[RMDB]
RNA sequence: GGGAACGACUCGAGUAGAGUCGAAAAGAUAUGGAGAUCAGAGACCAUCGAUCGUAGUCAACUCGGAAACGAGUUGAGCUACGGGAGGUCCUGAUCUCCUAAGUCAAAAGACGUGUUCGCACGUCAAGAUGACCACGUAGUUCGCUACGUGGUCAUCAAAAGAAACAACAACAACAAC
Reactivity to DMS in 0.01 (KOAc 150mM, MgCl2 10mM, bicine 150mM(pH8.5), 24C), signal-to-noise 2, nucleotides 027 to 126: g000a040u000a300u000g000g010a000g010a000u000c020a010g010a150g000a010c000c000a210u020c150g020a120u000c010g010u010a020g000u000c010a020a010c000u000c000g000g010a090a120a270c000g020a000g010u000u000g000a020g040c010u010a000c000g000g000g000a040g010g000u000c000c000u000g000a000u000c000u000c000c000u000a000a060g010u000c030a150a050a120a120g010a000c010g040u000g000u000u020c200g000c000a030c000g000u010c020a080a070
Reactivity to 2A3 in 0.01 (KOAc 150mM, MgCl2 10mM, bicine 150mM(pH8.5), 24C), signal-to-noise 2, nucleotides 027 to 126: g040a030u100a090u160g000g000a000g020a000u000c020a020g250a010g010a230c010c020a110u300c070g140a110u140c020g000u010a000g050u030c000a000a000c000u000c010g010g000a080a090a050c000g010a000g010u010u000g010a070g080c000u020a010c010g000g050g010a070g000g010u000c000c000u030g000a000u020c000u010c000c000u010a000a000g000u000c030a000a040a040a060g020a010c010g000u000g050u090u160c300g080c130a010c010g020u000c030a010a060
Record summary:
Chemical mapping of a 177-nucleotide RNA with DMS and 2A3. 2A3 adducts were read by reverse transcription with SuperScript II with manganese. High DMS reactivity at an A or C suggests that its Watson-Crick edge is free. For DMS the reverse transcriptase was MarathonRT.